[RMDB]
RNA sequence: GGGAACGACUCGAGUAGAGUCGAAAACAGCCAACUUUGUCCAUUAAAACAAACUUUUUCAGGCAGGUGGAGCGCAUCGAUGGCUUCCACCUUCUUGUAAGCCAGCUCCAGCUCCAGCUUCAGCUCCCACGGUGCUAGCGUUCGCGCUAGCACCGUGAAAAGAAACAACAACAACAAC
Reactivity to 2A3 in 0.01 (KOAc 150mM, MgCl2 10mM, bicine 150mM(pH8.5), 24C), signal-to-noise 2, nucleotides 027 to 126: c050a000g110c000c000a000a030c060u100u090u050g070u030c080c080a080u200u190a040a150a000a000c110a050a170a030c060u100u180u100u110u140c050a000g000g000c000a000g010g000u050g050g000a000g040c180g050c090a080u110c140g270a140u080g090g000c000u160u200c030c000a030c000c010u000u000c000u000u030g050u060a020a020g000c020c000a020g010c010u020c000c010a010g000c000u050c000c030a000g000c000u040u140c040a000g050c020u000c000c000

Structure probing data (2A3) for a 177-nucleotide construct. 2A3 adducts were read by reverse transcription with SuperScript II with manganese.